An RNA of 177 nucleotides, treated with 2A3 and DMS and read out base by base. Reactivities are rounded to 0.1 and cut off at 0 and 3. Reactivities are given for positions 27 through 126. DMS adducts were read by reverse transcription with MarathonRT. For 2A3, 906 sequencing reads were counted.
RNA sequence: GGGAACGACUCGAGUAGAGUCGAAAACUGAGCAUGAAAAAUCCGCAAGCUUCACGCGUUGCAGUCGUAGGUUGCUCCCAAGCACCACAAAGAUCCUUGAGAUUAUUUUUAGCUCUUUCGAAAUGACAAUACGUCCCAUGUUCGCAUGGGACGUAUUAAAAGAAACAACAACAACAAC
Reactivity to 2A3 in 0.01 (KOAc 150mM, MgCl2 10mM, bicine 150mM(pH8.5), 24C), signal-to-noise 1, nucleotides 027 to 126: c060u010g020a020g000c030a150u140g060a070a030a000a030a020u040c050c050g020c050a050a000g010c000u080u050c070a040c130g040c000g120u120u100g050c090a010g070u120c070g030u020a020g010g120u150u120g020c010u000c000c010c000a000a000g010c010a010c060c020a030c060a000a120a030g010a040u040c010c000u190u120g080a150g000a150u060u050a160u220u090u020u010u070a030g050c030u060c000u070u060u010c110g030a120a090a130u270g010a090c040
Reactivity to DMS in 0.01 (KOAc 150mM, MgCl2 10mM, bicine 150mM(pH8.5), 24C), signal-to-noise 2, nucleotides 027 to 126: c050u000g010a040g030c010a110u000g020a000a040a050a060a030u000c060c030g030c030a070a030g000c040u000u010c060a110c160g000c060g040u020u000g020c110a070g020u010c140g000u000a040g010g020u000u010g000c020u000c060c100c130a050a100g000c040a050c030c010a070c080a010a140a120g010a020u000c060c000u000u000g000a140g000a050u000u010a040u000u010u000u000u000a140g000c040u000c020u000u000u010c070g010a070a080a140u000g030a160c180